[RMDB]
RNA sequence: GGGAACGACUCGAGUAGAGUCGAAAAGCUCCUUCAGGUGAACGAUCUCGGUUGUUUCUCUGAAGGCAUGAUCACCCCGUCCGAUGCGGAAGUUCGUGCUUCCGUCGAACGCGAAAGUCGGACGGCGUAUUAAAAUAGAAUUCGUUCUAUUUUAAUAAAAAGAAACAACAACAACAAC
Reactivity to 2A3 in 0.01 (KOAc 150mM, MgCl2 10mM, bicine 150mM(pH8.5), 24C), signal-to-noise 9, nucleotides 027 to 126: g030c030u020c010c000u000u000c010a050g040g040u090g060a010a000c000g010a020u010c020u070c200g160g000u010u010g010u000u100u010c020u000c000u000g000a000a000g000g000c010a110u110g030a030u090c050a140c020c000c000c000g000u000c000c000g000a000u040g010c010g010g020a000a000g010u130u300c190g140u300g080c000u010u000c010c000g000u010c020g040a140a050c080g020c040g140a110a040a000g020u000c000g000g000a000c000g000g010c020g000
Reactivity to DMS in 0.01 (KOAc 150mM, MgCl2 10mM, bicine 150mM(pH8.5), 24C), signal-to-noise 9, nucleotides 027 to 126: g010c130u010c000c010u000u000c000a010g000g010u010g010a010a020c010g000a010u000c030u040c300g010g010u000u000g010u000u010u000c020u000c010u000g000a020a010g000g000c240a030u010g000a100u020c100a140c030c020c000c000g010u000c000c000g000a010u000g000c010g000g000a020a020g010u000u040c230g020u030g000c010u000u000c010c010g020u010c040g010a130a140c240g020c120g010a120a150a080g010u000c000g000g000a020c000g000g010c130g010